Structure probing data (DMS and 2A3) for a 207-nucleotide construct. Values cover nucleotides 27 to 156. The DMS profile rests on 4,188 reads.
RNA sequence: GGGAACGACUCGAGUAGAGUCGAAAAAGGUGAUGACGGAGAAACACGAUGACUUAAUCGUAUAUGACGGAGACGUAGUCAAUAAACGAGAGGCAAUUUCGCUAAUCAAACGGGGACUACAAGAGCCGAUGGCGGUGUUCAGAUCGAGAUAGAUUACUCCAUACACUAAUUUCGAUUAGUGUAUGGAAAAAGAAACAACAACAACAAC
Reactivity to DMS in 0.01 (KOAc 150mM, MgCl2 10mM, bicine 150mM(pH8.5), 24C), signal-to-noise 3, nucleotides 027 to 156: a070g010g040u000g020a090u010g020a200c040g030g000a150g000a130a090a050c080a080c030g000a100u000g000a080c120u000u000a040a060u000c020g000u000a100u000a110u020g010a080c040g060g020a140g000a140c130g010u020a060g010u010c020a080a070u010a090a090a110c090g010a090g000a180g040g000c060a070a170u000u000u000c040g030c060u000a060a290u000c050a050a050a080c030g020g000g000g010a080c030u020a060c040a100a170g010a140g050c030c040g050a080u000g010g030c070g000g060u000g020u000u000c040a070g010a070u010c030g000a110g020a100u010a040g020a170u000u000a080c080
Reactivity to 2A3 in 0.01 (KOAc 150mM, MgCl2 10mM, bicine 150mM(pH8.5), 24C), signal-to-noise 2, nucleotides 027 to 156: a000g030g000u030g020a070u030g020a020c020g060g000a040g000a030a140a000c070a010c050g030a040u030g050a020c040u050u130a040a010u060c030g000u040a060u010a040u210g050a020c030g020g020a060g010a030c060g000u010a010g030u000c000a000a070u170a090a070a010c030g010a010g000a020g080g000c020a070a080u100u170u140c080g000c010u060a080a040u040c000a020a030a030c040g020g000g010g050a000c010u030a020c030a040a020g020a010g080c050c000g030a020u040g060g000c020g020g010u010g040u000u070c110a020g010a090u050c030g050a020g000a080u040a040g060a010u000u130a050c050